An RNA of 207 nucleotides, treated with 2A3 and DMS and read out base by base. DMS adducts were read by reverse transcription with MarathonRT. For 2A3, 1,096 sequencing reads were counted. Source: RMDB library OK3TST, as collected in RNAgym. The reactions ran in a buffer of 150 mM KOAc, 10 mM MgCl2 and 150 mM bicine (pH 8.5), at 24 C.
[RMDB]
RNA sequence: GGGAACGACUCGAGUAGAGUCGAAAAGACGAGUAACAAAAGUUUUGCGACCUGGAACAGUUGUAGUUUUUUCACCAGGUCAAAAGUCAGCAAUGCGAGGAACAAAACGAUCUGUUGAUGAAAUUAUGGCUGACUCGGACAUUCUUGAACAAUAUAACAACUCUUAAACGUUCGCGUUUAAGAGUUGAAAAGAAACAACAACAACAAC
Reactivity to 2A3 in 0.01 (KOAc 150mM, MgCl2 10mM, bicine 150mM(pH8.5), 24C), signal-to-noise 2, nucleotides 027 to 156: g010a030c020g010a010g040u060a050a030c000a050a170a080a040g030u030u040u100u090g030c040g010a010c000c000u030g000g050a140a020c080a150g020u010u050g010u050a060g010u020u040u060u030u070u120c020a010c030c020a000g030g010u000c000a000a000a000a000g000u000c000a000g000c050a030a060u100g030c050g080a110g090g060a100a010c040a040a180a000a030c020g020a070u020c030u080g020u070u020g010a070u080g020a150a000a020u120u100a070u110g020g000c000u010g010a010c000u000c000g040g020a010c010a060u050u000c040u050u040g040a100a030c080a300a100u250a040u240a250a030
Reactivity to DMS in 0.01 (KOAc 150mM, MgCl2 10mM, bicine 150mM(pH8.5), 24C), signal-to-noise 1, nucleotides 027 to 156: g000a050c070g010a110g010u010a080a180c130a110a100a090a170g040u000u000u000u000g000c030g000a080c040c010u010g010g030a090a230c060a120g010u010u020g020u000a100g040u020u000u010u010u000u000c010a140c080c000a000g000g020u020c020a010a070a030a080g040u000c000a000g000c030a140a130u000g010c070g010a210g050g000a110a220c040a050a120a060a110c050g000a050u000c050u000g020u000u000g010a080u040g020a050a070a070u000u000a080u010g040g030c000u010g000a020c040u010c020g000g000a060c050a060u000u000c050u020u000g020a140a110c060a040a070u000a080u000a070a230